About this RNA
This 177-nucleotide RNA was probed chemically with DMS and 2A3. Conditions: 150 mM KOAc, 10 mM MgCl2 and 150 mM bicine (pH 8.5), 24 C. DMS adducts were read by reverse transcription with MarathonRT.

RNA sequence: GGGAACGACUCGAGUAGAGUCGAAAAUUUCCGCAAGGAAUGUCAUCGCGACCGCCCCGCCGGUGUCUGGACACCCGCAGUACGUCGCAGCUUCGAUCCCGUAUCGGGUGCCUCUCAAGCCUGCCGCCGCAGUAGUAAGUUUCGACUUACUACUGCGAAAAGAAACAACAACAACAAC
Reactivity to DMS in 0.01 (KOAc 150mM, MgCl2 10mM, bicine 150mM(pH8.5), 24C), signal-to-noise 5, nucleotides 027 to 126: u010u000u000c000c000g030c230a140a100g000g000a050a040u010g000u010c080a050u030c120g000c040g000a050c050c090g010c040c030c030c050g000c050c090g000g020u010g000u000c050u010g010g000a100c080a060c020c020c050g010c130a060g000u010a090c140g020u000c050g010c040a080g020c070u020u010c040g000a090u000c020c030c030g020u030a060u010c040g000g000g030u010g010c030c000u000c040u000c060a060a190g000c030c010u000g000c010c020g010c110
Reactivity to 2A3 in 0.01 (KOAc 150mM, MgCl2 10mM, bicine 150mM(pH8.5), 24C), signal-to-noise 7, nucleotides 027 to 126: u030u010u000c010c000g030c080a030a030g090g040a070a040u100g060u090c040a080u100c070g020c020g060a040c020c030g040c020c010c000c000g000c010c020g010g020u050g020u030c080u100g060g020a020c000a040c020c000c010g000c010a030g040u080a010c050g030u010c030g010c020a030g010c020u050u050c050g080a110u060c020c020c010g020u060a100u120c030g010g000g030u020g030c010c010u030c000u020c010a020a030g000c010c020u020g010c010c020g010c010